[RMDB]
RNA sequence: GGGAACGACUCGAGUAGAGUCGAAAAGGAACCGCGUUCGGCAACAUACCGUCAACGUGUCAUUGGCUUGUGUGUCAUUGAGAUCCCCGGCCAGGCGCAUUAACCGAUCUGCACGUAUGGCUUCGUCGAGGCAUGCUCGAUUCGUCGAGCAUGCCUCAAAAGAAACAACAACAACAAC
Reactivity to 2A3 in 0.01 (KOAc 150mM, MgCl2 10mM, bicine 150mM(pH8.5), 24C), signal-to-noise 1, nucleotides 027 to 126: g020g000a020a030c010c000g000c140g060u060u060c010g030g000c070a140a040c010a160u120a170c010c060g040u010c040a050a010c010g000u040g080u030c040a050u000u040g040g000c090u120u050g000u020g000u050g000u160c060a050u120u100g000a020g010a120u080c000c010c000c000g000g000c000c000a000g000g000c000g010c000a040u010u080a020a060c000c000g000a000u000c030u050g000c020a000c020g010u020a030u110g000g000c000u080u120c000g030u000c050
An RNA of 177 nucleotides, treated with 2A3 and read out base by base. The RNA was probed in 150 mM KOAc, 10 mM MgCl2 and 150 mM bicine (pH 8.5) at 24 C. As a SHAPE reagent, 2A3 marks flexible, mostly unpaired nucleotides at the ribose 2'-OH. For 2A3 the reverse transcriptase was SuperScript II with manganese. Reactivities are given for positions 27 through 126.